[RMDB]
RNA sequence: GGGAACGACUCGAGUAGAGUCGAAAAAUACGAUUGACGAUAUGGCGAGCAGCCCAUUUGCCGACCUGUUCAGCGGUAGUCAGGGGGAUCAGUCUCAUUAUUCACCUCAAUAAGUAAAAUGUAAGCCCUCUGUUACUGACUUCGGUCAGUAACAGAGAAAAGAAACAACAACAACAAC
Reactivity to DMS in 0.01 (KOAc 150mM, MgCl2 10mM, bicine 150mM(pH8.5), 24C), signal-to-noise 1, nucleotides 027 to 126: a060u000a100c160g010a090u010u010g000a080c040g010a100u010a080u010g000g030c090g000a040g010c090a140g000c060c000c030a140u000u020u000g010c010c010g020a090c060c090u000g010u000u010c160a190g000c130g000g010u000a030g000u000c040a060g010g000g000g030g000a130u000c050a070g000u000c030u000c050a020u000u000a040u000u000c170a060c040c060u000c120a050a000u020a040a090g030u010a010a040a040a060u030g000u000a060a110g000c050c010